Chemical mapping of a 177-nucleotide RNA with 2A3.
[RMDB]
RNA sequence: GGGAACGACUCGAGUAGAGUCGAAAAGCUGGUCGCGAUCGGGGGCGGGGCGGGAAUGGCGGCGCGCUGCGCGAUGUCCCGCGUGUGCUGGUCGAAGACAGGCAGGGACUCUAGCAGCUGGACCACGACCUAGGCACACCUUCGGGUGUGCCUAGGUAAAAGAAACAACAACAACAAC
Reactivity to 2A3 in 0.01 (KOAc 150mM, MgCl2 10mM, bicine 150mM(pH8.5), 24C), signal-to-noise 1, nucleotides 027 to 126: g000c060u130g000g000u020c000g000c020g090a080u030c000g020g000g000g000g000c060g000g060g000g250c170g000g000g090a000a110u100g030g050c020g040g000c000g080c120g020c090u070g000c000g000c000g120a050u250g060u050c000c000c000g000c000g110u030g030u000g060c020u040g000g150u160c180g030a020a000g080a000c050a040g000g250c100a090g000g000g000a030c000u000c000u020a000g000c030a000g000c000u020g000g000a080c000c060a000c000g010
The data come from the RNA Mapping Database (RMDB), library OK1LIB.